This 207-nucleotide RNA was probed chemically with 2A3 and DMS. For DMS, 1,685 sequencing reads were counted. For 2A3, 2,172 sequencing reads were counted. Conditions: 150 mM KOAc, 10 mM MgCl2 and 150 mM bicine (pH 8.5), 24 C.
[RMDB]
RNA sequence: GGGAACGACUCGAGUAGAGUCGAAAAUCCUGGUUCGCCAGGACGCCAGAUAUGGAAUAUUUACAGGAGGGUACUUUCCCGUAUAUCGGAAACGAUAUACGCAAGUACCUACCCACCCUGUGAUAUUCCUAAGUCAAUACUCAUAUUUCGAUAUGAAUAAUGUACAUCCGUUCGCGGAUGUACAUUAAAAAGAAACAACAACAACAAC
Reactivity to 2A3 in 0.01 (KOAc 150mM, MgCl2 10mM, bicine 150mM(pH8.5), 24C), signal-to-noise 3, nucleotides 027 to 156: u010c000c000u000g000g030u040u050c250g020c050c010a000g000g020a010c020g100c000c050a090g020a040u090a040u100g000g010a000a020u020a070u140u190u270a080c000a000g020g000a010g020g020g000u000a010c000u020u030u080c020c000c010g000u020a010u000a000u000c010g030g000a040a000a040c010g000a010u000a000u000a010c010g000c010a000a010g000u000a000c000c000u020a030c020c010c010a090c000c000c010u000g000u000g000a000u000a000u000u000c000c000u000a020a000g020u020c020a030a080u060a160c050u030c030a020u070a050u130u270u220c140g150a050u070a030u150g040a070a080
Reactivity to DMS in 0.01 (KOAc 150mM, MgCl2 10mM, bicine 150mM(pH8.5), 24C), signal-to-noise 1, nucleotides 027 to 156: u000c000c000u000g020g040u000u000c300g020c030c030a020g000g040a060c030g010c060c030a230g010a090u000a300u010g000g040a040a020u000a020u000u000u000a010c000a010g000g000a300g020g000g000u000a000c000u000u000u010c230c000c000g020u000a010u010a000u000c000g050g010a100a070a270c030g000a040u000a020u000a000c030g020c060a010a040g040u000a000c020c000u000a010c020c050c030a300c160c000c010u040g000u020g010a000u000a020u000u010c000c000u000a000a100g020u000c030a130a120u000a150c060u000c010a120u000a080u000u000u000c050g030a050u000a060u000g000a070a150